[RMDB]
RNA sequence: GGGAACGACUCGAGUAGAGUCGAAAAGGCAUUUGGGCACAGCAACAAAAGACUGCAUACAGCAGCUGAUACCCUUACACACAUUUUUGUGGCAAGAUCAUUUACAAUCUGACCUGGUGAAUUCCAGAUGACCAAAGAAACCAUUUCAUCCACGUCAGCCUGCGCAGGUCUUCGGACCUGCGCAGGCAAAAGAAACAACAACAACAAC
Reactivity to 2A3 in 0.01 (KOAc 150mM, MgCl2 10mM, bicine 150mM(pH8.5), 24C), signal-to-noise 1, nucleotides 027 to 156: g030g020c010a020u040u070u160g020g000g010c000a000c000a080g000c050a020a040c000a010a120a000a010g130a040c020u020g010c040a090u080a100c000a070g000c000a020g000c020u030g000a020u050a100c000c050c000u070u070a090c050a000c000a000c010a020u050u080u110u130u190g000u010g000g000c000a040a080g010a040u020c010a020u050u120u080a100c060a070a070u040c030u080g060a060c040c010u060g000g000u010g130a060a090u080u020c000c000a000g020a110u070g060a120c050c050a010a030a060g060a010a030a000c010c300a010u300u300u300c000a000u300c000c300a010c020g070u100c000a000